[RMDB]
RNA sequence: GGGAACGACUCGAGUAGAGUCGAAAAUGAAAUAGCGUGUGCAAGACGCUGAUCUUGCCAUGAUCUGCAACUUUAGUGCUGAGGUCCGAGUUCCAGGGUAUCAUGUCGGACCUUAGCACUAAUUAAACAUCAUGUCGGAGUUCGCUCCGACAUGAUGAAAAGAAACAACAACAACAAC
Reactivity to DMS in 0.01 (KOAc 150mM, MgCl2 10mM, bicine 150mM(pH8.5), 24C), signal-to-noise 2, nucleotides 027 to 126: u000g010a110a130a100u000a090g040c020g020u000g000u010g010c020a010a030g000a030c010g000c240u000g000a060u010c000u000u000g000c000c000a020u000g000a040u010c070u020g000c150a090a060c100u000u000u000a010g010u000g000c000u010g000a010g020g010u000c000c000g010a060g000u010u000c190c120a060g010g010g020u010a070u000c080a100u000g010u000c020g000g000a030c020c000u000u000a000g020c000a010c010u000a000a010u000u000a040a070a130
Reactivity to 2A3 in 0.01 (KOAc 150mM, MgCl2 10mM, bicine 150mM(pH8.5), 24C), signal-to-noise 2, nucleotides 027 to 126: u150g020a000a000a090u130a040g080c020g020u040g050u110g030c010a010a010g040a000c050g050c300u100g030a260u000c000u000u010g010c000c000a020u020g070a120u060c030u090g030c030a040a060c040u040u010u040a000g000u000g020c000u020g000a020g030g000u000c000c000g000a000g010u160u030c030c070a060g110g010g000u210a110u300c050a070u110g080u050c000g010g000a000c000c000u010u000a000g010c010a000c000u000a000a000u000u000a000a000a000